[RMDB]
RNA sequence: GGGAACGACUCGAGUAGAGUCGAAAACGGCCAGUCCGUGGCUUAUCAGUGACCUACUACUUGGAAGCAAAAAUGAAGGCAUUCAAAGACUCGAUUCCUUUACUUCUUGACUUGAAAAACGAGGCACUAAGAGACAGGCAUUGGAAAGAACUUAUGACUCCCGUCAUUUAUUCGUAAAUGACGGGAGAAAAGAAACAACAACAACAAC
Reactivity to 2A3 in 0.01 (KOAc 150mM, MgCl2 10mM, bicine 150mM(pH8.5), 24C), signal-to-noise 4, nucleotides 027 to 156: c030g030g000c030c010a030g050u090c030c030g120u040g040g000c000u040u080a100u150c070a020g040u040g130a240c000c010u030a070c010u020a030c030u100u070g050g040a040a010g030c050a030a050a050a050a060u130g020a000a020g030g020c040a020u060u060c050a080a130a100g080a130c070u030c080g020a030u020u050c010c000u100u070u070a100c020u060u080c010u060u090g080a220c010u030u100g080a090a050a030a010a030c040g010a050g010g010c010a020c050u060a070a040g030a000g030a050c010a010g010g020c020a020u070u160g020g010a070a070a020g140a070a050c030u110u170a090u300g060a080
Reactivity to DMS in 0.01 (KOAc 150mM, MgCl2 10mM, bicine 150mM(pH8.5), 24C), signal-to-noise 2, nucleotides 027 to 156: c070g030g050c020c050a100g030u000c080c070g040u000g020g000c010u000u010a090u020c020a080g040u010g020a100c020c000u010a090c060u000a020c100u050u000g020g000a080a100g000c050a010a070a100a100a080u020g000a090a060g010g000c030a070u000u010c070a100a130a190g000a050c080u010c090g010a210u000u000c010c020u000u000u010a040c020u000u010c060u020u010g000a080c010u000u010g000a040a050a040a050a190c080g030a090g010g000c020a050c060u040a040a100g000a170g020a080c010a060g050g000c020a100u000u010g010g000a030a070a090g000a060a050c050u010u020a100u000g010a300

This 207-nucleotide RNA was probed chemically with 2A3 and DMS. Values cover nucleotides 27 to 156. For 2A3 the reverse transcriptase was SuperScript II with manganese. The RNA was probed in 150 mM KOAc, 10 mM MgCl2 and 150 mM bicine (pH 8.5) at 24 C. For DMS, 2,400 sequencing reads were counted.